Chemical mapping of a 207-nucleotide RNA with 2A3 and DMS.
For DMS the reverse transcriptase was MarathonRT.
Values cover nucleotides 27 to 156.
For 2A3 the reverse transcriptase was SuperScript II with manganese.
Source: RMDB library OK3TST, as collected in RNAgym.
For DMS, 1,736 sequencing reads were counted.
RNA sequence: GGGAACGACUCGAGUAGAGUCGAAAAGUGAAGAUAAAGAUAUUCAUGAACAGAACAGUAAGAAGCCUGUUAUGGUCUAUAUCCAUGGGGGAUCUUACAUGGAGGGAACCGGUAACAUGAUUGAUGGCAGCAUUUUGGCCAGCUAUGGGAACGUCAACCGCAUACUAGGAUUCGUCCUAGUAUGCGGAAAAGAAACAACAACAACAAC
Reactivity to 2A3 in 0.01 (KOAc 150mM, MgCl2 10mM, bicine 150mM(pH8.5), 24C), signal-to-noise 2, nucleotides 027 to 156: g090u080g010a000a000g030a070u100a130a130a000g030a020u150a120u130u140c010a030u020g070a020a040c050a050g050a080a000c000a050g010u060a030a030g010a130a020g120c000c010u040g060u180u060a040u010g030g000u080c100u100a040u070a030u170c010c030a000u000g000g020g000g000g000a010u000c000u050u040a040c040a020u020g020g030a000g040g030g010a010a020c070c000g030g030u000a070a000c000a020u060g070a140u120u000g050a020u070g080g050c000a010g030c020a070u060u010u070u120g030g000c000c000a000g000c000u000a010u120g010g020g030a030a000c030g020u020c030a000a070
Reactivity to DMS in 0.01 (KOAc 150mM, MgCl2 10mM, bicine 150mM(pH8.5), 24C), signal-to-noise 1, nucleotides 027 to 156: g030u000g020a090a070g020a130u040a060a080a090g020a110u000a090u000u000c030a100u000g020a070a160c030a150g040a070a070c060a160g040u000a120a130g010a140a190g020c150c040u000g010u010u000a020u000g000g010u010c030u020a100u010a090u010c030c020a010u010g010g020g040g050g020a230u010c050u000u000a060c030a100u010g010g010a090g030g000g020a050a100c070c030g040g000u040a020a060c110a000u010g040a130u010u000g010a050u000g000g050c040a180g050c150a210u000u030u000u010g040g060c050c000a040g000c050u010a040u000g010g010g030a040a090c030g020u000c040a070a170